[RMDB]
RNA sequence: GGGAACGACUCGAGUAGAGUCGAAAACAGGGUUCACGAUGUGUUCUAUGCGGAUCAGGUGCUGGUCCAGGAAUCCGCAGCCGUGAAACUCAAUACCUUUUUGGAUCGAUAGGAGACGAGGUAUGGAGUUCCAUCCAGUGUUCGCACUGGAUGGAACAAAAGAAACAACAACAACAAC
Reactivity to DMS in 0.01 (KOAc 150mM, MgCl2 10mM, bicine 150mM(pH8.5), 24C), signal-to-noise 2, nucleotides 027 to 126: c140a140g010g010g010u000u000c020a030c000g010a170u000g040u000g000u010u010c040u010a100u000g020c060g000g000a020u010c040a060g000g010u010g040c050u000g000g000u000c000c030a180g000g010a070a090u010c080c040g000c030a070g000c130c030g000u020g010a030a050a050c010u010c010a150a060u000a030c010c000u000u000u010u010u000g010g040a120u000c070g010a160u000a160g010g020a090g000a100c070g000a000g020g010u000a020u010g040g000a140
Reactivity to 2A3 in 0.01 (KOAc 150mM, MgCl2 10mM, bicine 150mM(pH8.5), 24C), signal-to-noise 2, nucleotides 027 to 126: c030a030g080g000g000u010u000c040a010c030g030a070u090g050u000g080u190u060c050u100a110u170g100c020g010g020a010u030c010a000g170g100u180g180c080u100g070g040u000c000c030a030g070g040a080a050u030c020c010g000c010a020g040c080c000g020u020g050a130a030a010c010u040c000a020a000u030a020c000c000u030u050u010u110u100g060g000a070u030c060g060a150u120a230g160g080a020g000a010c010g000a000g030g000u050a030u050g010g060a110
Notes:
Structure probing data (DMS and 2A3) for a 177-nucleotide construct. For 2A3, 1,721 sequencing reads were counted. It was measured as part of the RMDB library OK2TRN. The RNA was probed in 150 mM KOAc, 10 mM MgCl2 and 150 mM bicine (pH 8.5) at 24 C. Values cover nucleotides 27 to 126.